The data come from the RNA Mapping Database (RMDB), library OK3TST. Structure probing data (2A3 and DMS) for a 207-nucleotide construct. Values cover nucleotides 27 to 156. Conditions: 150 mM KOAc, 10 mM MgCl2 and 150 mM bicine (pH 8.5), 24 C.
RNA sequence: GGGAACGACUCGAGUAGAGUCGAAAAUCGCUGACGACGCACACCUGACCUACGCACAACUCGAGCAAUCACUUUGUGUGUUCACCGAGGAGCUACGAGAAAGCGGCCUCUCGCCAGGAGACCACGUGCUACUGCAACUGCCAAACACCGCAGCGUAUAGCAUUUAGGAUUUCGAUCCUAAAUGCUAAAAAGAAACAACAACAACAAC
Reactivity to 2A3 in 0.01 (KOAc 150mM, MgCl2 10mM, bicine 150mM(pH8.5), 24C), signal-to-noise 6, nucleotides 027 to 156: u070c010g010c020u030g020a100c050g010a030c040g020c030a010c000a030c050c020u050g090a120c000c020u070a040c060g040c020a020c020a090a100c010u020c040g020a020g020c010a080a260u100c020a100c170u010u080u030g030u010g020u030g060u200u240c040a020c000c050g010a020g000g000a030g010c030u130a120c080g020a000g060a070a090a010g010c030g020g020c000c010u030c000u030c030g050c030c020a020g040g000a040g020a020c030c030a040c070g030u050g020c010u030a060c030u030g030c020a080a030c060u070g040c010c030a060a100a040c050a020c020c020g020c010a010g000c030g030u070a040
Reactivity to DMS in 0.01 (KOAc 150mM, MgCl2 10mM, bicine 150mM(pH8.5), 24C), signal-to-noise 2, nucleotides 027 to 156: u000c020g020c040u010g030a140c000g020a090c020g000c030a100c050a100c050c030u000g020a090c050c020u000a110c050g000c030a090c020a100a100c010u000c040g020a090g030c000a090a160u000c050a050c030u010u000u010g030u000g020u000g020u010u000c010a070c060c020g010a050g000g020a140g000c020u010a080c020g000a100g000a110a090a130g020c000g030g040c000c000u000c010u010c030g020c070c080a120g010g010a170g000a070c020c020a030c100g010u000g000c000u000a060c060u000g000c000a090a050c030u000g000c020c030a000a070a130c050a050c050c080g000c020a010g000c020g020u000a180